Notes: An RNA of 177 nucleotides, treated with 2A3 and DMS and read out base by base. Conditions: 150 mM KOAc, 10 mM MgCl2 and 150 mM bicine (pH 8.5), 24 C. Values cover nucleotides 27 to 126. For 2A3, 960 sequencing reads were counted.
RNA sequence: GGGAACGACUCGAGUAGAGUCGAAAAUUCAUCCUGUUUAUAGGACUGAAAGAACUGAAGUUGUGCAGCAAUGCAUAACAAGGGGAACGUACAAAUUGAUGUCUAAAGCCCAACAACGGAAGGCACGUAACCACGUUCAGUUCGCUGAACGUGGUUAAAAAGAAACAACAACAACAAC
Reactivity to 2A3 in 0.01 (KOAc 150mM, MgCl2 10mM, bicine 150mM(pH8.5), 24C), signal-to-noise 1, nucleotides 027 to 126: u020u000c010a000u000c000c000u060g090u080u240u120a300u150a020g070g000a040c040u020g010a040a050a020g000a000a020c010u060g010a170a010g050u010u000g010u010g000c000a000g010c000a010a110u010g010c000a000u020a020a000c010a010a010g000g010g020g010a090a000c050g090u240a050c030a010a210a050u140u170g050a090u060g040u000c000u050a050a070a120g020c020c020c030a000a070c070a020a030c030g100g000a020a050g060g050c050a010c020g020
Reactivity to DMS in 0.01 (KOAc 150mM, MgCl2 10mM, bicine 150mM(pH8.5), 24C), signal-to-noise 2, nucleotides 027 to 126: u000u000c040a090u000c000c000u000g010u010u000u020a150u050a080g000g000a030c250u000g000a010a050a140g000a250a160c010u000g000a140a100g000u000u000g020u000g000c000a020g000c300a070a060u010g000c000a020u000a020a000c000a040a300g030g000g020g000a050a060c180g010u000a050c070a020a070a060u000u000g010a100u000g000u000c030u000a030a140a110g010c010c010c050a080a060c080a080a130c090g010g010a150a050g020g010c030a020c120g000